[RMDB]
RNA sequence: GGGAACGACUCGAGUAGAGUCGAAAAAGUCACUAUUAUAAAACUUCGGGUCUUAUUCUCAUAUGCCCCCGCAAGCGAGGGCCUGGUCGAUUAGUGAGACCAGGUGCGACGCGGGGGCUACAGCCCGUAAACAACAGUACUUCGGUACUGUUGUUUAAAAAGAAACAACAACAACAAC
Reactivity to DMS in 0.01 (KOAc 150mM, MgCl2 10mM, bicine 150mM(pH8.5), 24C), signal-to-noise 4, nucleotides 027 to 126: a060g010u020c050a080c070u010a070u030u030a130u040a080a070a100a080c080u020u010c020g000g000g000u000c040u010u050a130u010u010c050u000c030a100u020a100u010g010c000c010c010c010c000g020c010a170a240g000c040g020a070g030g010g010c000c000u000g010g000u000c000g000a230u040u020a110g010u030g010a240g000a010c000c000a010g000g010u000g010c000g000a100c190g000c010g020g010g020g000g010c000u000a010c120a100g000c000c020c020g020
Reactivity to 2A3 in 0.01 (KOAc 150mM, MgCl2 10mM, bicine 150mM(pH8.5), 24C), signal-to-noise 5, nucleotides 027 to 126: a000g070u070c050a030c120u070a070u300u060a130u180a100a120a060a040c040u110u080c040g020g000g010u000c020u030u110a080u100u010c030u010c040a050u060a030u240g000c020c000c000c010c000g020c030a070a130g090c030g060a070g060g150g010c000c010u010g000g020u010c010g070a130u080u230a150g120u090g140a090g000a030c000c000a000g000g000u020g010c000g010a010c050g000c000g010g000g010g000g000c000u000a000c000a000g020c010c000c000g010